[RMDB]
RNA sequence: GGGAACGACUCGAGUAGAGUCGAAAAGAUAUGGAUCUGGCCUGGGAGGUCCUGCUCGGAAACGAGCAGCGACCAUCGAUCAGGCAGAUCCUAAGUCAAAAGUCUCGGAUCUUCGGAUCCGAGACAACAUAUCCUGGAAGUUCGCUUCCAGGAUAUGAAAAGAAACAACAACAACAAC
Reactivity to 2A3 in 0.01 (KOAc 150mM, MgCl2 10mM, bicine 150mM(pH8.5), 24C), signal-to-noise 4, nucleotides 027 to 126: g010a010u020a010u070g010g000a000u020c010u050g300g190c010c000u070g020g070g070a180g010g010u010c000c020u000g000c000u000c010g010g000a010a010a010c000g000a000g020c010a000g010c070g010a010c010c000a050u250c120g060a120u010c000a000g010g000c010a000g010a000u000c000c000u000a000a000g000u010c020a080a010a110a230g010u000c000u000c000g010g010a010u010c020u110u210c300g080g000a000u000c010c000g000a000g000a000c000a000a000
Reactivity to DMS in 0.01 (KOAc 150mM, MgCl2 10mM, bicine 150mM(pH8.5), 24C), signal-to-noise 3, nucleotides 027 to 126: g020a010u000a040u010g000g000a010u000c000u000g020g020c000c000u020g010g010g030a120g050g010u000c000c000u000g000c000u000c000g020g000a010a020a040c000g010a000g010c000a010g000c300g000a020c000c010a140u010c300g000a110u010c000a010g000g000c010a010g000a010u000c000c000u000a000a050g000u010c010a100a110a160a170g010u000c000u000c000g000g000a020u000c000u010u020c270g020g000a000u000c000c000g010a000g000a000c000a010a090
Structure probing data (2A3 and DMS) for a 177-nucleotide construct. It was measured as part of the RMDB library TTRDES. For 2A3, 14,124 sequencing reads were counted. The reactions ran in a buffer of 150 mM KOAc, 10 mM MgCl2 and 150 mM bicine (pH 8.5), at 24 C.